[RMDB]
RNA sequence: GGGAACGACUCGAGUAGAGUCGAAAAGUAAUUGAAAUUCGAUCGAUGAGGUUCUUCUCGGGCCGGAUGGAUUGACAUAGGUUGAUCAUGUCCAGUGCAAUGUCCGAAUUUAGUUUUGAAAUUGGAACAUCCUUGAGGUUCACCUCAAUCACCUCGCAGUACGAAUUCCAUUCGUGGAAUUCGUACUAAAAGAAACAACAACAACAAC
Reactivity to DMS in 0.01 (KOAc 150mM, MgCl2 10mM, bicine 150mM(pH8.5), 24C), signal-to-noise 1, nucleotides 027 to 156: g020u000a060a110u020u010g000a080a090a130u010u000c040g010a100u000c070g030a280u000g020a070g010g020u000u000c030u000u010c030u000c030g010g030g030c040c020g040g020a060u020g000g020a050u010u000g020a070c030a210u010a080g010g000u000u000g010a000u000c000a100u000g000u000c000c050a080g040u010g010c030a110a070u000g020u000c000c010g000a040a060u000u010u000a100g040u000u020u000u000g000a020a030a070u000u010g020g010a010a020c010a040u000c030c030u000u000g010a050g010g010u000u000c050a060c030c020u010c020a060a110u010c010a050c040c010u000c010g030c300
Reactivity to 2A3 in 0.01 (KOAc 150mM, MgCl2 10mM, bicine 150mM(pH8.5), 24C), signal-to-noise 4, nucleotides 027 to 156: g080u100a040a210u100u090g090a120a070a060u210u090c080g030a090u060c010g010a020u090g000a020g020g000u080u010c010u070u000c010u000c000g040g000g000c030c030g020g010a020u040g040g000a000u010u030g000a010c070a120u300a100g300g000u020u010g040a030u020c080a210u120g050u000c020c020a020g020u070g210c020a040a050u090g020u000c020c000g060a000a030u030u040u090a130g050u050u050u050u300g080a050a070a060u010u050g010g000a090a040c010a020u050c010c000u010u110g000a000g000g010u080u100c070a040c020c000u000c000a050a130u040c020a050c010c020u040c060g060c050